[RMDB]
RNA sequence: GGGAACGACUCGAGUAGAGUCGAAAACUUCAGUAUCGCACGGUUGCCCCAGUGAGAGAAGGCUGCGGCGGAUUGCUCUAUUAGUUUGGGCUGUGUGUUGGUUGCGCGCUGAGAGUAUCACCAUCGGCUAAAUAUAAUUUUUCGAAAUUAUAUUUAGAAAAGAAACAACAACAACAAC
Reactivity to DMS in 0.01 (KOAc 150mM, MgCl2 10mM, bicine 150mM(pH8.5), 24C), signal-to-noise 6, nucleotides 027 to 126: c030u000u020c040a060g010u010a060u030c030g010c030a060c080g000g030u020u020g010c020c000c010c050a090g010u030g010a110g010a120g010a120a120g010g000c030u000g020c280g000g000c050g010g010a080u010u010g010c020u000c030u010a090u020u020a080g010u010u030u010g000g000g020c040u000g010u010g010u000g000u000u000g010g010u010u000g010c030g020c150g000c010u000g000a050g000a040g010u000a040u020c070a090c020c020a080u020c080g000g000
Reactivity to 2A3 in 0.01 (KOAc 150mM, MgCl2 10mM, bicine 150mM(pH8.5), 24C), signal-to-noise 7, nucleotides 027 to 126: c020u070u040c020a020g030u020a070u180c020g010c000a030c020g110g030u100u150g030c010c010c010c020a020g030u090g080a160g000a020g040a160a050g080g000c000u010g020c020g040g000c010g010g100a110u070u140g010c010u000c030u020a180u170u110a100g170u070u140u110g010g000g010c030u010g020u000g000u000g000u030u070g040g000u050u020g000c020g000c000g000c000u010g000a010g000a000g100u020a050u130c050a060c080c000a050u070c030g070g000
Chemical mapping of a 177-nucleotide RNA with DMS and 2A3. It was measured as part of the RMDB library OK1LIB. The RNA was probed in 150 mM KOAc, 10 mM MgCl2 and 150 mM bicine (pH 8.5) at 24 C.